Chemical mapping of a 207-nucleotide RNA with 2A3. High 2A3 reactivity points to a flexible backbone, as in loops and unpaired stretches. Values cover nucleotides 27 to 156. For 2A3, 694 sequencing reads were counted. The RNA was probed in 150 mM KOAc, 10 mM MgCl2 and 150 mM bicine (pH 8.5) at 24 C. Source: RMDB library VIROID, as collected in RNAgym.

RNA sequence: GGGAACGACUCGAGUAGAGUCGAAAACGGCUUAGCGGAUUAGGGCGUUCUGCCCCAGUGGUACCAUUACCCUAUGCAAAGUCUGCAUGCAGGCAGGGUAGUGUGCUGCUCGGGCACAACUGGUCGAGAGCUGGGCCGCUCUCCUGAUGAGCCCAUGCCACAUAUGGUCGUUCGCGACCAUAUGUGGAAAAGAAACAACAACAACAAC
Reactivity to 2A3 in 0.01 (KOAc 150mM, MgCl2 10mM, bicine 150mM(pH8.5), 24C), signal-to-noise 1, nucleotides 027 to 156: c020g000g020c010u030u030a000g030c000g160g000a170u010u140a220g050g100g120c010g070u110u070c040u050g000c010c010c000c000a010g000u050g040g000u000a030c100c060a000u000u000a000c000c000c000u080a100u040g140c030a040a110a050g060u000c100u130g140c110a230u200g040c030a020g220g000c000a000g000g000g000u000a000g000u000g000u000g000c000u020g000c040u000c020g020g000g000c000a000c030a020a060c010u170g010g250u040c010g000a020g000a020g210c020u010g000g000g000c000c090g020c020u030c020u040c000c050u200g120a140u130g040a070g000c000c000c040a030u160g090